[RMDB]
RNA sequence: GGGAACGACUCGAGUAGAGUCGAAAAGAUGGGAAAGACUUAUCGCAAGAUGCUCAUGCAAAAGAUUUAGAAUCUAUGGGUAUUUCUGUUGUAAGUGGAAGUCAUCCAUUAACAUUGCUUGAUAAUAAGGUGACGAUUAAUUCGUUAAUCGUCACCUAAAAGAAACAACAACAACAAC
Reactivity to DMS in 0.01 (KOAc 150mM, MgCl2 10mM, bicine 150mM(pH8.5), 24C), signal-to-noise 2, nucleotides 027 to 126: g020a000u000g020g000g000a110a090a240g010a060c000u000u000a010u010c110g020c020a050a090g010a000u000g010c060u010c000a010u000g000c260a070a060a120a050g000a010u000u010u000a180g020a090a050u000c000u000a000u000g000g000g010u000a020u000u000u000c190u010g010u000u010g020u000a010a020g020u000g000g010a130a130g020u030c060a020u000c020c020a060u010u000a070a110c160a090u000u030g000c150u010u010g010a100u010a070a080u000a090
Reactivity to 2A3 in 0.01 (KOAc 150mM, MgCl2 10mM, bicine 150mM(pH8.5), 24C), signal-to-noise 1, nucleotides 027 to 126: g000a000u020g040g100g170a130a060a000g080a030c000u010u050a030u070c030g030c030a000a000g000a020u000g000c010u010c020a000u030g090c040a010a160a190a000g000a020u100u140u200a120g060a100a000u030c030u020a010u020g000g030g020u010a010u020u030u000c120u020g030u060u020g000u010a030a020g010u030g010g020a020a000g060u040c020a020u000c000c000a040u050u040a090a030c040a120u070u140g060c060u100u160g100a120u100a300a040u100a090
The record gives the reactivity of an RNA of 177 nucleotides to DMS and 2A3. 2A3 adducts were read by reverse transcription with SuperScript II with manganese. The 2A3 profile rests on 907 reads. The reactions ran in a buffer of 150 mM KOAc, 10 mM MgCl2 and 150 mM bicine (pH 8.5), at 24 C.